[RMDB]
RNA sequence: GGGAACGACUCGAGUAGAGUCGAAAAGACUACGUAGAAGGCUGUAUCUGACUUAGAGAGCUGUAUGGCUGACAGAACACUGUCAGCUGGAUACUUGGCAAGUCAGGAAUACUUGGCACGUAGAGAAGAUAUUGUGUAAUUUCGAUUGUACAAUAUCAAAAGAAACAACAACAACAAC
Reactivity to 2A3 in 0.01 (KOAc 150mM, MgCl2 10mM, bicine 150mM(pH8.5), 24C), signal-to-noise 9, nucleotides 027 to 126: g010a020c000u000a000c000g020u030a020g040a200a030g120g010c020u010g000u010a010u000c000u000g000a000c000u020u050a030g040a000g010a010g080c030u020g010u020a010u020g010g000c000u000g000a000c000a000g030a110a040c260a050c090u000g000u000c000a000g000c000u000g000g010a000u000a000c000u040u040g010g000c020a010a000g000u000c000a000g000g040a030a000u010a010c010u040u060g030g000c010a000c000g000u000a000g010a000g010a060a000
Reactivity to DMS in 0.01 (KOAc 150mM, MgCl2 10mM, bicine 150mM(pH8.5), 24C), signal-to-noise 9, nucleotides 027 to 126: g010a180c010u000a000c010g000u010a070g000a140a050g000g010c140u020g020u010a030u010c000u000g000a020c000u000u000a080g010a300g000a050g000c200u010g010u010a110u030g000g010c000u000g000a000c000a000g000a220a150c300a100c010u000g000u000c000a000g000c000u000g000g000a070u010a030c000u010u000g000g030c200a030a000g000u000c000a010g000g000a070a040u010a030c010u000u010g000g000c180a030c000g000u000a010g000a150g010a110a090